This 177-nucleotide RNA was probed chemically with 2A3 and DMS. The DMS profile rests on 7,517 reads. Reactivities are given for positions 27 through 126. The data come from the RNA Mapping Database (RMDB), library OK1LIB. For DMS the reverse transcriptase was MarathonRT.
RNA sequence: GGGAACGACUCGAGUAGAGUCGAAAAAGAUAUGGAGAAGUACUCAAGUGGCUCAAGAGGAUCCCCUGCUAAGGGAUUAGGCUGGGUAACCGGUGCGAGGGUUCGAAUCCCUCCUUCUCCGCCAAUUAUAAAUUUAGUAUUUCGAUACUAAAUUUAUAAAAGAAACAACAACAACAAC
Reactivity to 2A3 in 0.01 (KOAc 150mM, MgCl2 10mM, bicine 150mM(pH8.5), 24C), signal-to-noise 6, nucleotides 027 to 126: a010g170a120u230a100u300g000g000a010g000a000a000g000u000a000c000u010c010a010a010g020u060g170g070c100u010c020a010a000g010a000g010g000a000u020c010c010c000c010u070g100c080u150a060a070g020g000g000a000u000u010a010g030g000c010u010g000g010g050u120a190a140c000c010g020g000u000g010c010g000a010g000g010g000u000u000c000g000a000a010u000c000c000c000u000c000c000u000u000c000u000c000c000g000c000c000a010a020u080u010
Reactivity to DMS in 0.01 (KOAc 150mM, MgCl2 10mM, bicine 150mM(pH8.5), 24C), signal-to-noise 7, nucleotides 027 to 126: a080g000a240u020a050u050g000g000a000g010a000a010g000u010a010c010u010c010a010a020g000u020g010g040c110u010c030a000a300g000a020g000g000a000u000c020c010c000c030u030g010c300u080a140a130g000g000g000a030u000u000a000g010g000c000u000g000g010g000u040a180a100c000c000g000g020u000g030c030g020a010g010g000g000u010u000c010g000a300a010u010c000c000c000u000c000c010u000u000c000u000c000c000g010c060c060a020a160u010u010